[RMDB]
RNA sequence: GGGAACGACUCGAGUAGAGUCGAAAAGACGCUGAUGCGAUCGACUGUAAGAUAGAUAGAAUGAGCAGACAGAUACGUACGGCAAGUAUCGUCGCCAGAACUACAGUCGCAAAUUGCCGUACGAAGAAUCCGCCUCAGGAUUCGUCCUGAGGCGGAUAAAAGAAACAACAACAACAAC
Reactivity to 2A3 in 0.01 (KOAc 150mM, MgCl2 10mM, bicine 150mM(pH8.5), 24C), signal-to-noise 1, nucleotides 027 to 126: g060a010c040g000c000u200g030a140u300g060c080g050a050u000c080g040a000c000u000g000u040a130a000g180a060u200a000g120a110u090a010g300a300a290u090g000a000g000c000a000g030a000c000a080g000a000u000a200c000g070u000a000c000g000g000c000a010a010g040u070a030u170c060g000u000c000g000c000c000a120g060a000a000c040u030a000c000a010g000u000c040g050c050a030a210a230u090u000g000c000c000g000u000a020c000g000a030a000g090a070